The record gives the reactivity of an RNA of 177 nucleotides to 2A3. It was measured as part of the RMDB library OK2TRN. For 2A3, 731 sequencing reads were counted.

RNA sequence: GGGAACGACUCGAGUAGAGUCGAAAACAUCGGAUACGAACGUGCUGCCGCUGACGCUGAUCGCCCGGUAUUUGGACCGAUACGGCAUCCGCGCCGACACGAUUCGCAUCACCAGCCGCGUCACCGCCAGCUGUGCUGCGUUCGCGCAGCACAGCUGAAAAGAAACAACAACAACAAC
Reactivity to 2A3 in 0.01 (KOAc 150mM, MgCl2 10mM, bicine 150mM(pH8.5), 24C), signal-to-noise 1, nucleotides 027 to 126: c000a100u130c090g170g040a020u090a070c040g010a000a000c010g010u010g000c010u010g090c100c070g030c000u000g000a040c000g080c010u000g000a040u000c000g060c000c050c110g080g000u220a300u060u180u290g080g030a000c010c020g040a070u150a300c050g000g040c000a020u010c010c000g020c070g000c000c050g100a070c010a000c050g220a180u120u020c000g000c020a010u060c000a020c050c020a000g030c010c020g090c020g170u110c020a050c040c000g060c030